An RNA of 177 nucleotides, treated with 2A3 and DMS and read out base by base. DMS adducts were read by reverse transcription with MarathonRT.
RNA sequence: GGGAACGACUCGAGUAGAGUCGAAAAUACAACAUAAGUGAGUACUUGACCUGCUGCAGCAAGUGGAAUUGCAAGAGCAAUCGCAGUUGGAAUAUCUUGCCCACCAACGAUAACAAGAAUGGUUGAAGCUAUCGAACGAUUUCGAUCGUUCGAUAGCAAAAGAAACAACAACAACAAC
Reactivity to 2A3 in 0.01 (KOAc 150mM, MgCl2 10mM, bicine 150mM(pH8.5), 24C), signal-to-noise 1, nucleotides 027 to 126: u090a020c030a080a020c030a130u120a160a000g050u000g140a020g000u050a040c020u040u050g030a020c000c000u020g010c030u010g030c030a070g010c010a100a020g080u060g100g070a140a080u080u020g070c020a070a060g060a040g030c050a030a010u070c020g000c010a000g010u070u060g050g040a050a000u040a030u160c080u000u090g060c000c000c040a010c000c020a020a000c040g110a060u100a020a080c030a090a000g040a150a160u070g080g090u020u030g070a070a020
Reactivity to DMS in 0.01 (KOAc 150mM, MgCl2 10mM, bicine 150mM(pH8.5), 24C), signal-to-noise 1, nucleotides 027 to 126: u000a050c050a080a150c030a120u020a060a090g030u010g000a090g040u010a040c050u020u020g010a170c010c030u010g030c000u000g010c100a130g010c010a110a000g040u000g010g010a070a090u000u000g060c020a080a170g030a110g030c140a030a010u010c100g010c040a080g000u010u000g000g010a030a100u040a020u000c070u000u020g050c110c030c050a090c080c050a030a050c080g050a150u000a150a070c130a060a020g000a040a080u000g010g050u000u000g000a120a170

For 2A3, 866 sequencing reads were counted. The reactions ran in a buffer of 150 mM KOAc, 10 mM MgCl2 and 150 mM bicine (pH 8.5), at 24 C. For 2A3 the reverse transcriptase was SuperScript II with manganese. Values cover nucleotides 27 to 126.